[RMDB]
RNA sequence: GGGAACGACUCGAGUAGAGUCGAAAACAUAGCCAUGGGGCAUGCUGUGUUCGCCCCUGCGCCUGGCAUCCUGGAGGGAAAAAGCAAGUGCUGUGGGCGGCGUGGCGGGCACCCGGCUCGGCCAGGCCGUUUGCCAUACGUUCGCGUAUGGCAAACGAAAAGAAACAACAACAACAAC
Reactivity to DMS in 0.01 (KOAc 150mM, MgCl2 10mM, bicine 150mM(pH8.5), 24C), signal-to-noise 4, nucleotides 027 to 126: c080a090u000a040g010c010c040a080u010g030g000g010g010c030a060u010g020c020u000g010u000g010u000u000c050g020c010c000c000c030u000g000c030g010c010c030u000g010g010c050a080u000c000c010u000g010g010a190g030g000g010a030a040a060a160a100g000c010a060a040g010u000g000c010u000g000u010g010g000g010c010g010g000c020g010u000g000g000c010g010g000g010c000a050c010c030c060g000g010c010u000c060g020g000c010c020a100g000g010c090
Reactivity to 2A3 in 0.01 (KOAc 150mM, MgCl2 10mM, bicine 150mM(pH8.5), 24C), signal-to-noise 4, nucleotides 027 to 126: c020a050u120a030g010c010c020a130u250g010g000g010g010c010a030u060g000c020u030g030u040g030u300u240c010g000c010c010c000c000u010g000c010g000c010c010u020g070g010c000a040u040c010c010u140g130g110a260g060g070g000a070a170a050a020a030g090c030a030a020g000u020g030c020u020g020u300g010g000g030c020g010g000c020g010u010g000g000c000g030g030g010c020a150c000c010c030g000g000c000u010c020g050g000c020c010a040g030g060c010